Description:
The record gives the reactivity of an RNA of 177 nucleotides to DMS and 2A3. Source: RMDB library M2PK50, as collected in RNAgym. For DMS, 3,686 sequencing reads were counted. The reactions ran in a buffer of 150 mM KOAc, 10 mM MgCl2 and 150 mM bicine (pH 8.5), at 24 C. For 2A3, 2,605 sequencing reads were counted. For 2A3 the reverse transcriptase was SuperScript II with manganese.

RNA sequence: GGGAACGACUCGAGUAGAGUCGAAAAUCAUGGUGGUUCGCCACCAUGAACUGUCUAGUCGCUAGAAAACGAUCAAAACUAGCGACUAGACUAAGGAUCGAACUGGGGGACAGUUCGCUGUCCCCAAUCAAUAGCGAGAGUUCGCUCUCGCUAUUGAAAAAGAAACAACAACAACAAC
Reactivity to DMS in 0.01 (KOAc 150mM, MgCl2 10mM, bicine 150mM(pH8.5), 24C), signal-to-noise 4, nucleotides 027 to 126: u000c000a000u000g020g020u000g020g000u000u020c200g030c000c000a010c000c010a000u000g020a010a120c060u000g000u000c000u000a010g000u000c000g020c010u000a000g000a060a030a130a150c150g010a120u000c130a070a100a100a100c010u000a010g000c000g000a000c000u000a000g000a000c000u010a070a080g010g000a080u000c070g020a080a090c210u010g000g000g010g010g000a040c000a010g000u000u010c200g010c010u000g010u000c000c000c000c010a000a010
Reactivity to 2A3 in 0.01 (KOAc 150mM, MgCl2 10mM, bicine 150mM(pH8.5), 24C), signal-to-noise 2, nucleotides 027 to 126: u040c000a000u000g000g000u000g000g050u040u050c180g060c060c010a000c000c010a000u000g010a000a020c010u010g000u000c000u010a000g000u000c000g000c020u000a020g060a110a170a050a050c140g140a200u210c120a030a060a030a140c000u000a000g040c000g000a000c000u000a000g000a000c000u000a000a000g040g010a120u250c100g060a050a120c170u210g080g040g010g010g000a000c000a000g000u050u060c190g040c060u000g000u000c000c000c000c000a000a000